[RMDB]
RNA sequence: GGGAACGACUCGAGUAGAGUCGAAAAGAUAUGGAGCGUUGCAGGGAGCUGAUGGGUCGGAAACGACCCAAUAGCAUCGAUCUGUGCGCUCCUAAGUCAAACGACGUCAAGUUCGCUUGACGUCGAACGUAUACAAAUACUUCGGUAUUUGUAUACGAAAAGAAACAACAACAACAAC
Reactivity to 2A3 in 0.01 (KOAc 150mM, MgCl2 10mM, bicine 150mM(pH8.5), 24C), signal-to-noise 7, nucleotides 027 to 126: g010a000u020a010u090g000g000a010g030c060g060u300u300g020c090a010g050g050g100a190g030c000u010g010a080u030g000g010g000u010c000g000g000a030a010a010c000g000a000c000c010c020a010a010u040a000g000c010a050u300c150g090a150u010c010u000g010u010g000c000g000c010u010c000c000u000a000a000g000u000c010a010a060a110c020g000a000c010g000u000c000a000a010g010u060u190c300g050c160u000u000g000a000c000g000u000c000g000a010a000
Reactivity to DMS in 0.01 (KOAc 150mM, MgCl2 10mM, bicine 150mM(pH8.5), 24C), signal-to-noise 8, nucleotides 027 to 126: g010a020u000a110u010g010g000a010g020c010g030u000u020g050c010a020g000g000g010a070g040c010u010g020a130u000g010g000g020u000c000g010g000a030a020a070c000g020a010c000c000c000a000a010u000a020g020c000a300u000c300g000a050u010c000u000g010u000g010c000g010c000u000c000c000u000a000a060g010u000c010a100a140a250c010g010a010c000g000u010c000a010a010g010u000u020c290g010c000u000u000g000a010c000g010u000c000g010a030a050

This 177-nucleotide RNA was probed chemically with 2A3 and DMS. 2A3 adducts were read by reverse transcription with SuperScript II with manganese. The data come from the RNA Mapping Database (RMDB), library TTRDES.